[RMDB]
RNA sequence: GGGAACGACUCGAGUAGAGUCGAAAAGCGACCGCCACGGUGGACGCCGCUACGGAUGUGCCCGCUCCCGCCAACGCGGCUGGCAGUCAAGGUGCCGGCACUCUCGGCUUUGCCGGUACCGCACCGACGCCUGCGGUACCUUCGGGUACCGCAGGCGAAAAGAAACAACAACAACAAC
Reactivity to 2A3 in 0.01 (KOAc 150mM, MgCl2 10mM, bicine 150mM(pH8.5), 24C), signal-to-noise 1, nucleotides 027 to 126: g080c000g060a080c000c050g000c040c100a130c070g080g000u030g010g040a040c020g000c000c000g000c050u070a040c070g080g080a110u100g040u110g050c030c020c000g000c010u040c000c030c000g040c010c010a100a020c110g000c010g050g000c010u030g000g010c010a010g070u070c050a060a100g000g000u030g010c000c000g000g010c000a080c010u220c070u050c060g170g010c090u030u040u020g000c000c000g000g000u000a000c000c000g000c000a000c000c000g040a040
Chemical mapping of a 177-nucleotide RNA with 2A3. The RNA was probed in 150 mM KOAc, 10 mM MgCl2 and 150 mM bicine (pH 8.5) at 24 C. 2A3 adducts were read by reverse transcription with SuperScript II with manganese.